Structure probing data (DMS) for a 177-nucleotide construct. For DMS, 3,649 sequencing reads were counted. Reactivities are given for positions 27 through 126.

[RMDB]
RNA sequence: GGGAACGACUCGAGUAGAGUCGAAAAUCAUUCGCAGAGGCCGAAGAAUUCGCCGAGAAAUGGAAGCGUAACCUGGGGUGGCGCCUCCUGCGUCAGCUUCGUGAAUGCGGCGCCCUGGCCGGGACUGUAUACCCCCAUGAUUCGUCAUGGGGGUAUAAAAAGAAACAACAACAACAAC
Reactivity to DMS in 0.01 (KOAc 150mM, MgCl2 10mM, bicine 150mM(pH8.5), 24C), signal-to-noise 3, nucleotides 027 to 126: u010c070a070u000u000c030g020c070a110g010a100g010g000c030c020g000a090a080g020a100a190u000u000c030g020c030c070g020a080g000a070a100a080u010g010g010a030a050g020c010g010u000a080a090c050c020u000g020g020g000g040u000g000g000c020g000c020c110u010c080c050u020g010c060g010u010c070a060g010c020u000u010c030g020u000g000a070a060u000g000c040g000g010c040g000c030c030c000u010g020g010c020c000g010g010g010a080c100u010g000
Notes:
The data come from the RNA Mapping Database (RMDB), library OK2TST. The reactions ran in a buffer of 150 mM KOAc, 10 mM MgCl2 and 150 mM bicine (pH 8.5), at 24 C.